[RMDB]
RNA sequence: GGGAACGACUCGAGUAGAGUCGAAAAUUAGCCUCAUCCUUGCAUAGGUUCACGAUGUGAUGCUUCAACUGUCGUUUCAGCUCGUUAUCAUCCUGUAAUCAACCAGAACUUUGAGGUCAUCUAUGCACCGUAGGGGCGGUUUCGACCGCCCCUACGGAAAAGAAACAACAACAACAAC
Reactivity to 2A3 in 0.01 (KOAc 150mM, MgCl2 10mM, bicine 150mM(pH8.5), 24C), signal-to-noise 1, nucleotides 027 to 126: u080u000a000g120c000c000u030c000a150u120c020c020u000u050g010c040a040u050a040g070g070u120u020c040a000c020g090a150u110g000u060g060a000u030g060c020u050u060c000a090a030c030u040g050u010c000g000u000u000u000c000a000g000c050u020c000g100u110u050a070u070c000a000u080c000c000u000g000u040a130a000u180c020a010a110c000c000a000g060a080a070c070u130u110u080g000a120g000g000u110c000a000u000c030u100a180u000g000c090a000
Conditions: 150 mM KOAc, 10 mM MgCl2 and 150 mM bicine (pH 8.5), 24 C. Chemical mapping of a 177-nucleotide RNA with 2A3. For 2A3, 593 sequencing reads were counted.